[RMDB]
RNA sequence: GGGAACGACUCGAGUAGAGUCGAAAAUACCGUCUUCUCCCCGACGGUUUCAAUCCAUAGCUUCACGUUGUGUAGCGUAGGUGGAAGGUAUCGUGUGGUGUAUAAACACCACAUAGUCUCUUAGGGGCAGAAACCGUGGAUUCGUCCACGGUUUCUGAAAAGAAACAACAACAACAAC
Reactivity to DMS in 0.01 (KOAc 150mM, MgCl2 10mM, bicine 150mM(pH8.5), 24C), signal-to-noise 2, nucleotides 027 to 126: u010a070c000c000g000u010c050u060u010c060u060c010c000c000c140g010a110c030g020g020u000u020u020c010a000a100u010c000c020a030u010a180g020c020u000u020c020a010c000g010u010u020g000u000g000u000a000g020c010g000u030a130g010g020u010g000g010a100a070g050g030u000a110u070c050g000u000g000u000g000g000u010g070u020a080u070a110a100a070c010a000c000c000a000c000a000u000a040g020u000c030u000c030u000u020a120g060g010g000g000
Reactivity to 2A3 in 0.01 (KOAc 150mM, MgCl2 10mM, bicine 150mM(pH8.5), 24C), signal-to-noise 3, nucleotides 027 to 126: u050a010c010c010g000u000c020u110u030c030u160c000c010c000c020g000a020c000g010g000u000u050u060c020a030a040u010c010c000a010u020a090g000c000u030u050c020a020c070g300u300u300g030u080g020u050a030g000c040g040u070a120g040g160u010g000g050a020a020g100g020u090a040u190c060g000u030g000u010g000g020u010g030u010a090u120a300a220a020c000a000c000c000a010c000a000u010a010g000u000c010u000c020u070u150a050g000g000g000g000